[RMDB]
RNA sequence: GGGAACGACUCGAGUAGAGUCGAAAAACAGCUUGGAGGUGGUGCUGGUGAUCAUGUCCAUCAGUUCGAUGGGAACUUUCGUUCCCGACUUGAUGAACGUUCGGCUGGCACGGGCUCCCUCGAACCGAGCUGGGUCCUCGUCAACGCCGUAGGCGACCAUGACACAAUUGUUCGCAAUUGUGUCAUGAAAAGAAACAACAACAACAAC
Reactivity to 2A3 in 0.01 (KOAc 150mM, MgCl2 10mM, bicine 150mM(pH8.5), 24C), signal-to-noise 8, nucleotides 027 to 156: a000c010a010g010c010u020u050g020g000a050g000g050u180g010g030u030g010c010u070g050g060u030g040a140u070c060a100u220g030u000c020c010a010u010c020a020g020u060u060c080g110a150u200g010g000g010a000a010c000u150u300u290c250g000u000u000c000c000c000g010a020c020u060u220g020a040u080g010a030a000c010g030u050u050c020g060g000c000u010g000g000c000a000c010g020g050g000c020u020c000c010c010u020c030g070a100a070c030c020g000a010g000c000u000g000g030g040u020c000c020u040c020g080u060c030a140a130c040g040c060c040g220u190a110g030g000c010g010a020c030
Reactivity to DMS in 0.01 (KOAc 150mM, MgCl2 10mM, bicine 150mM(pH8.5), 24C), signal-to-noise 3, nucleotides 027 to 156: a050c010a050g010c030u010u010g020g000a120g040g010u000g030g010u000g000c000u000g030g040u000g010a100u010c070a070u010g020u010c020c010a030u000c010a040g010u000u000c040g010a120u010g010g010g020a010a010c010u000u010u010c260g020u020u000c010c000c000g010a010c020u000u010g020a030u000g010a010a020c010g020u000u000c050g020g000c000u000g000g000c030a020c000g030g010g020c010u000c020c020c000u000c030g010a100a160c050c040g000a050g030c000u000g010g010g000u000c030c010u010c060g000u000c050a080a110c050g010c030c010g020u000a140g020g020c010g010a150c130